Chemical mapping of a 207-nucleotide RNA with 2A3 and DMS. For DMS, 3,496 sequencing reads were counted.
RNA sequence: GGGAACGACUCGAGUAGAGUCGAAAACAUUACGAAUUCAGUCGCAAAUUGUAGAAUUAGCUACUCUACGAUUUAGUGAGCGUUAGUAACGUUGUAAUGUAAUAUAGUCUUUGGAAGGAUUAUAUUGGAGCCGCGGACAAGUUCGCUUGUCCGCGAAUCAACGGCAUUAGUUCGCUAAUGCCGUUGAAAAAGAAACAACAACAACAAC
Reactivity to 2A3 in 0.01 (KOAc 150mM, MgCl2 10mM, bicine 150mM(pH8.5), 24C), signal-to-noise 4, nucleotides 027 to 156: c020a030u070u080a010c030g080a080a110u110u130c060a080g110u020c010g010c030a000a000a000u010u000g000u010a010g010a030a050u050u020a040g050c040u090a030c010u000c000u000a000c000g000a000u000u010u100a080g000u020g030a070g060c020g020u040u050a050g030u080a060a060c070g000u000u030g010u020a040a020u030g000u020a010a020u010a000u010a000g010u000c060u070u110u120g210g040a120a110g040g000a010u000u020a010u010a010u030u050g050g030a060g110c090c000g000c010g010g000a010c010a010a000g010u050u100c220g060c120u000u010g000u000c000c000g000c000g010a000a020
Reactivity to DMS in 0.01 (KOAc 150mM, MgCl2 10mM, bicine 150mM(pH8.5), 24C), signal-to-noise 2, nucleotides 027 to 156: c040a030u000u000a020c010g000a060a060u000u000c030a090g000u000c020g060c030a050a050a030u000u000g040u000a020g010a040a050u000u020a280g030c190u000a100c080u000c010u000a020c000g000a030u000u000u000a120g040u000g020a050g000c100g060u000u000a060g010u000a030a030c060g020u000u000g010u000a060a080u010g000u000a050a040u010a020u000a000g000u000c030u000u000u000g010g000a250a240g000g010a030u010u000a010u000a010u000u010g010g000a210g020c120c030g060c020g000g020a030c040a020a060g000u010u010c300g010c030u000u000g010u000c010c000g010c010g000a010a040

DMS adducts were read by reverse transcription with MarathonRT.
The RNA was probed in 150 mM KOAc, 10 mM MgCl2 and 150 mM bicine (pH 8.5) at 24 C.